Conditions: 150 mM KOAc, 10 mM MgCl2 and 150 mM bicine (pH 8.5), 24 C. This 207-nucleotide RNA was probed chemically with 2A3.
RNA sequence: GGGAACGACUCGAGUAGAGUCGAAAAACACAAAAAGUACAGCAAGUCGUAGUCGCUGGCGACGUUAAACUGACUCAAGCGCCGCGUCUCGUCCAGCGCGCGGCGCAGGCGCGGCUGCUGCAUCAACACGCCCAGCCCCCGCUCGUACUGCAGCGCCGAGUAGAUGUGAGUUCGCUCACAUCUACUCAAAAGAAACAACAACAACAAC
Reactivity to 2A3 in 0.01 (KOAc 150mM, MgCl2 10mM, bicine 150mM(pH8.5), 24C), signal-to-noise 1, nucleotides 027 to 156: a000c060a000c050a040a150a030a060a000g060u110a020c000a040g000c020a140a060g030u080c030g080u160a100g130u130c060g050c040u020g000g000c000g070a260c010g000u070u190a090a110a100c030u040g000a010c040u030c190a150a040g000c000g000c010c000g010c000g000u000c010u000c000g040u020c050c070a080g120c110g000c080g010c030g070g040c000g000c000a010g000g000c020g010c000g010g000c090u140g000c000u020g000c000a040u060c020a000a010c010a000c040g050c000c020c000a000g000c000c000c060c000c000g020c060u030c010g010u040a050c030u030g000c020a060g030c010g000c000c030
For 2A3 the reverse transcriptase was SuperScript II with manganese.